[RMDB]
RNA sequence: GGGAACGACUCGAGUAGAGUCGAAAAUCUACACCAGUUGAACCUCCAACUGUAGAUGUGGUAGCACUUCAACAGGAAAUGACAAUUGUCAAAUGUAAGGGUUUAAAUAAACCUUUCGUGAAGGACAUAACACGCGGGUUCGCCCGCGUGAAAAGAAACAACAACAACAAC
Reactivity to 2A3 in 0.01 (KOAc 150mM, MgCl2 10mM, bicine 150mM(pH8.5), 24C), signal-to-noise 2, nucleotides 027 to 129: u000c010u000a020c010a000c000c000a000g000u000u000g030a010a070c000c000u010c020c000a020a020c030u050g060u100a120g020a190u080g000u050g000g030u020a030g010c020a000c070u010u000c050a000a000c090a030g000g240a000a070a000u210g050a010c000a030a180u300u030g030u070c000a000a140a000u000g130u270a040a070g000g000g010u040u010u000a220a300a120u180a010a140a000c000c000u000u010u010c000g030u010g020a020a050g140g000a000c000a000u150a040a000
Reactivity to DMS in 0.01 (KOAc 150mM, MgCl2 10mM, bicine 150mM(pH8.5), 24C), signal-to-noise 2, nucleotides 027 to 129: u070c070u020a020c040a210c100c120a020g000u020u000g000a110a220c030c030u070c130c000a050a020c030u030g010u030a020g010a060u020g080u040g000g050u070a130g010c050a050c020u020u000c050a030a000c000a050g000g000a050a050a060u040g020a030c000a180a060u140u000g010u000c010a060a080a040u020g000u040a000a080g080g000g040u000u000u030a090a050a120u040a020a040a050c000c020u000u000u000c000g000u060g020a120a120g020g050a070c020a080u040a040a050
Record summary: The record gives the reactivity of an RNA of 170 nucleotides to 2A3 and DMS. High DMS reactivity at an A or C suggests that its Watson-Crick edge is free. Reactivities are given for positions 27 through 129. The DMS profile rests on 4,196 reads. Values are in units of 0.01, from 0 to 300, in steps of 10. The reactions ran in a buffer of 150 mM KOAc, 10 mM MgCl2 and 150 mM bicine (pH 8.5), at 24 C. The 2A3 profile rests on 2,831 reads.